Structure probing data (DMS and 2A3) for a 177-nucleotide construct. It was measured as part of the RMDB library RFM100. The RNA was probed in 150 mM KOAc, 10 mM MgCl2 and 150 mM bicine (pH 8.5) at 24 C. DMS adducts were read by reverse transcription with MarathonRT. 2A3 adducts were read by reverse transcription with SuperScript II with manganese.
RNA sequence: GGGAACGACUCGAGUAGAGUCGAAAAAGACGGUCUCUCUAAGCUGGUAGAUCGAAAACCUAAAUACGAACAACUUAAGUUCUGUCGUAGUGGCUCCUAAUAUCCAAGCCCUAUGACACUAUUGUGGCAGUUGUACGGUCUUCGGACCGUACAACUGAAAAGAAACAACAACAACAAC
Reactivity to DMS in 0.01 (KOAc 150mM, MgCl2 10mM, bicine 150mM(pH8.5), 24C), signal-to-noise 1, nucleotides 027 to 126: a000g000a290c010g080g000u000c000u000c140u000c020u000a110a300g020c010u050g000g000u000a000g050a030u030c000g000a040a200a000a100c000c000u000a020a000a150u050a040c120g000a000a010c000a270a200c300u000u020a120a010g010u000u010c020u000g000u000c000g060u000a000g180u150g000g000c030u000c280c130u270a000a120u000a030u070c200c190a030a000g000c000c000c000u060a020u000g010a000c000a020c080u000a000u050u000g000u010g000g000
Reactivity to 2A3 in 0.01 (KOAc 150mM, MgCl2 10mM, bicine 150mM(pH8.5), 24C), signal-to-noise 4, nucleotides 027 to 126: a000g150a030c000g000g000u000c000u000c000u000c010u100a080a020g190c070u050g060g010u060a000g040a080u010c030g020a040a040a050a090c010c010u070a060a070a010u290a080c120g010a020a000c000a050a020c110u170u200a160a020g000u080u000c050u060g000u030c000g000u020a030g000u070g100g000c000u050c000c020u300a300a190u080a120u190c100c020a010a000g000c000c000c000u000a010u030g000a010c000a020c030u150a120u100u150g050u050g070g000